The record gives the reactivity of an RNA of 177 nucleotides to DMS.
Conditions: 150 mM KOAc, 10 mM MgCl2 and 150 mM bicine (pH 8.5), 24 C.
For DMS the reverse transcriptase was MarathonRT.
[RMDB]
RNA sequence: GGGAACGACUCGAGUAGAGUCGAAAAUUGGAAGGGGAAAGAGGAAGGUGGAAAAGAAGGGGCGGGCCUCCCGAAUCGAGGGGUCCGGCGCCCAGAACUGGGAGACAUUCCGGCCCGAAGGGUUGAGCAUCAUGAACUACUUCGGUAGUUCAUGAUGAAAAGAAACAACAACAACAAC
Reactivity to DMS in 0.01 (KOAc 150mM, MgCl2 10mM, bicine 150mM(pH8.5), 24C), signal-to-noise 1, nucleotides 027 to 126: u000u000g010g010a120a040g000g000g000g000a000a100a070g030a120g020g000a050a030g010g000u010g010g000a110a050a140a060g020a080a170g010g000g010g050c010g010g000g030c030c000u000c010c010c010g030a080a120u010c050g010a120g010g000g010g010u010c050c030g030g010c160g000c000c030c000a070g010a020a050c120u000g000g000g000a040g030a030c190a120u010u000c080c030g010g010c020c020c010g010a120a090g000g010g010u000u010g010a140g030